This 177-nucleotide RNA was probed chemically with DMS.
RNA sequence: GGGAACGACUCGAGUAGAGUCGAAAAGAUAUGGAUUCGACCCGAUGAAAUACACUACCCACCUCGGAAACGAGAGGUGUAUGGAGGGUUAGAAUCCUAAGUCAAAAGGGCGUGUUCGCACGCCCAACUUAGGGGACUAGUUCGCUAGUCCCCUAAGAAAAGAAACAACAACAACAAC
Reactivity to DMS in 0.01 (KOAc 150mM, MgCl2 10mM, bicine 150mM(pH8.5), 24C), signal-to-noise 2, nucleotides 027 to 126: g000a020u000a120u010g000g020a020u000u000c020g020a000c000c000c000g000a090u020g010a130a120a000u000a000c000a010c000u000a090c170c150c060a270c240c000u000c000g020g010a060a040a060c000g000a000g020a090g000g000u000g000u000a020u000g000g010a030g010g010g020u000u020a020g000a010a010u010c000c000u020a020a100g000u000c100a060a060a110a090g020g010g020c000g020u000g010u020u010c200g010c000a020c010g000c010c000c000a000a010
Reactivities are rounded to 0.1 and cut off at 0 and 3. The RNA was probed in 150 mM KOAc, 10 mM MgCl2 and 150 mM bicine (pH 8.5) at 24 C.